[RMDB]
RNA sequence: GGGAACGACUCGAGUAGAGUCGAAAACGAAGUCAGUGAGGCCAGCACGUCAUGGUAGGUUACUAGCGGACUCAUACUCCGUUGGGUUGUAGCUCAUUUGGGUAGAGCACUCGUUUUUGGAACGAAUUGAUACAACUCACUUCGGUGAGUUGUAUCAAAAAGAAACAACAACAACAAC
Reactivity to DMS in 0.01 (KOAc 150mM, MgCl2 10mM, bicine 150mM(pH8.5), 24C), signal-to-noise 2, nucleotides 027 to 126: c090g000a070a150g010u000c070a050g000u010g040a080g040g030c030c020a040g020c040a100c060g000u010c070a050u010g030g060u020a060g000g000u000u010a090c030u000a070g000c020g000g010a030c020u000c180a060u010a140c300u000c000c010g000u000u000g000g000g000u020u000g000u000a100g060c040u000c030a070u010u020u000g020g050g000u000a070g040a110g050c030a120c160u010c020g000u000u000u010u010u020g030g020a070a140c000g010a030a150u000
Reactivity to 2A3 in 0.01 (KOAc 150mM, MgCl2 10mM, bicine 150mM(pH8.5), 24C), signal-to-noise 2, nucleotides 027 to 126: c020g020a070a000g130u100c070a000g040u050g040a060g010g030c030c000a000g000c030a060c000g040u060c030a070u090g030g060u020a130g010g080u200u120a070c000u030a010g000c000g000g000a000c000u030c050a100u130a130c000u000c010c000g040u040u020g000g000g040u030u090g040u160a050g000c010u010c000a080u090u140u190g090g000g040u110a040g050a000g030c010a030c030u020c060g080u000u000u000u130u040g020g070a030a040c050g000a010a000u010
An RNA of 177 nucleotides, treated with DMS and 2A3 and read out base by base. For 2A3, 717 sequencing reads were counted. Reactivities are rounded to 0.1 and cut off at 0 and 3. Values cover nucleotides 27 to 126. Conditions: 150 mM KOAc, 10 mM MgCl2 and 150 mM bicine (pH 8.5), 24 C.